[RMDB]
RNA sequence: GGGAACGACUCGAGUAGAGUCGAAAACUGUUCUUCCACAAGACGGGGGCUCGACCUUUCGAGGACCAAACAAGAGAGCAUUCUUUCAGUCUGGUCAAACUCUGGGACAAUAACGCGGAUGACGUUCUGAUAUGCUCGGAUAACGGCCACGACGUGCGCAAUGUACCCUGUUCGCAGGGUACAUUGCAAAAGAAACAACAACAACAAC
Reactivity to 2A3 in 0.01 (KOAc 150mM, MgCl2 10mM, bicine 150mM(pH8.5), 24C), signal-to-noise 2, nucleotides 027 to 156: c010u040g080u120u000c020u180u030c060c060a150c080a080a080g030a030c050g060g030g000g020g000c040u010c000g060a110c020c000u040u110u020c000g000a020g020g050a020c010c040a020a020a020c050a080a070g090a000g000a000g040c100a080u150u000c070u010u110u050c030a020g000u000c020u010g000g000u020c000a000a140a090c070u000c000u060g030g010g020a020c020a100a150u100a080a000c040g010c050g080g130a120u110g040a230c030g000u100u000c030u050g040a070u020a060u200g000c010u000c020g000g010a000u010a020a080c070g020g020c000c000a000c060g010a000c030g020u140g030c070
Overview
The record gives the reactivity of an RNA of 207 nucleotides to 2A3. It was measured as part of the RMDB library OK3TST. The reactions ran in a buffer of 150 mM KOAc, 10 mM MgCl2 and 150 mM bicine (pH 8.5), at 24 C. Reactivities are given for positions 27 through 156.